[RMDB]
RNA sequence: GGGAACGACUCGAGUAGAGUCGAAAAGAGUCCUAUUUCGAUAGGACUCAACUAAAAUCACCGGUAAAUAAUUAGCUGGCGUUACCGCUGAACGCCAGCAUACUAGCCUCGUCUUCGGACGAGGCAAAGUUCAGACACAAUUCGUUGUGUCUGAACUAAAAGAAACAACAACAACAAC
Reactivity to 2A3 in 0.01 (KOAc 150mM, MgCl2 10mM, bicine 150mM(pH8.5), 24C), signal-to-noise 2, nucleotides 027 to 126: g000a000g010u000c010c000u000a010u010u090u100c200g060a010u010a000g000g040a000c000u010c010a010a020c000u080a010a010a030a130u070c040a050c210c050g100g080u100a050a140a120u160a070a180u250u200a040g000c000u010g000g000c010g000u000u030a140c030c040g040c160u110g040a010a000c010g000c000c000a000g000c010a000u010a000c000u010a050g010c000c000u010c010g020u020c020u010u050c220g090g000a000c000g010a000g020g000c000a000a000
Reactivity to DMS in 0.01 (KOAc 150mM, MgCl2 10mM, bicine 150mM(pH8.5), 24C), signal-to-noise 2, nucleotides 027 to 126: g040a010g010u000c000c000u000a000u000u010u000c170g000a020u000a000g000g000a000c000u010c000a040a060c080u000a040a050a060a120u000c100a130c040c030g030g000u000a110a170a110u010a110a090u000u000a090g000c020u000g030g010c000g000u000u000a100c060c200g000c110u000g000a000a000c020g000c000c000a000g010c000a020u010a030c110u010a200g000c000c000u000c010g000u000c000u000u030c140g030g010a000c000g010a000g010g010c000a000a010
Notes
This 177-nucleotide RNA was probed chemically with 2A3 and DMS. It was measured as part of the RMDB library M2PK50. For 2A3, 2,149 sequencing reads were counted. The DMS profile rests on 1,533 reads.